[RMDB]
Structure probing data (2A3) for a 207-nucleotide construct. 2A3 adducts were read by reverse transcription with SuperScript II with manganese. The RNA was probed in 150 mM KOAc, 10 mM MgCl2 and 150 mM bicine (pH 8.5) at 24 C. Reactivities are given for positions 27 through 156. Source: RMDB library OK3TST, as collected in RNAgym.
RNA sequence: GGGAACGACUCGAGUAGAGUCGAAAAUAUAGAUGUGUCGAGGGCGUCUUCGGGGGCCCAUACCUGUUUAUCUCAAAUGGGUAUGUAUUGCUGAUUCUAUACAUUCUACCUACUCUGACGGCUAUGUGGAAGGGACGUCCGUUCUAUGUAGGUCCUGCUCUACUCGUCCAUUCGUGGACGAGUAGAGAAAAGAAACAACAACAACAAC
Reactivity to 2A3 in 0.01 (KOAc 150mM, MgCl2 10mM, bicine 150mM(pH8.5), 24C), signal-to-noise 2, nucleotides 027 to 156: u100a000u020a010g020a020u030g060u040g030u140c030g010a040g010g050g020c060g270u000c050u070u100c110g080g030g010g020g000c000c000c000a010u020a020c010c000u030g030u020u030u080a180u170c130u050c200a000a010a030u000g000g000g000u010a010u010g030u050a120u040u230g050c030u030g040a130u030u000c010u000a010u010a030c040a040u040u030c010u020a040c000c000u000a010c000u020c070u080g000a010c020g000g030c030u070a060u140g040u110g050g100a060a040g050g040g050a070c040g060u020c000c000g000u050u010c030u050a070u040g010u000a000g000g080u030c050c030u060g020